[RMDB]
Chemical mapping of a 177-nucleotide RNA with DMS and 2A3.

RNA sequence: GGGAACGACUCGAGUAGAGUCGAAAAGAUAUGGAUAGCGAGGUACGCACCGAAGAACUCGGAAACGAGGGAGGUGAGUACUACCCACCGCUAUCCUAAGUCAAACCAACGUGUUCGCACGUUGGAAGACGCUAGGUUAGUUCGCUAACCUAGCGUCAAAAGAAACAACAACAACAAC
Reactivity to DMS in 0.01 (KOAc 150mM, MgCl2 10mM, bicine 150mM(pH8.5), 24C), signal-to-noise 2, nucleotides 027 to 126: g000a050u000a300u000g000g030a000u010a010g000c030g000a010g040g050u000a010c040g020c000a020c000c000g000a100a120g010a100a140c010u000c000g010g000a110a040a220c010g030a010g010g000g000a070g060g040u000g000a020g000u010a000c000u000a000c060c060c090a300c050c000g000c000u000a000u000c000c000u000a000a140g010u030c010a090a200a130c010c000a000a000c000g010u000g000u000u000c160g030c000a010c010g010u030u010g000g000a100a030
Reactivity to 2A3 in 0.01 (KOAc 150mM, MgCl2 10mM, bicine 150mM(pH8.5), 24C), signal-to-noise 1, nucleotides 027 to 126: g020a030u210a070u220g000g000a000u000a010g000c000g000a020g000g010u000a000c010g000c010a010c010c000g080a150a060g030a010a020c000u010c020g010g000a090a040a030c030g000a010g000g030g010a020g000g010u010g010a020g000u010a000c010u010a020c050c030c040a050c010c000g000c020u000a000u040c000c000u000a060a050g060u060c060a160a000a090c020c000a010a000c000g000u050g010u080u080c300g050c170a000c000g000u020u000g030g010a020a060

The 2A3 profile rests on 3,288 reads.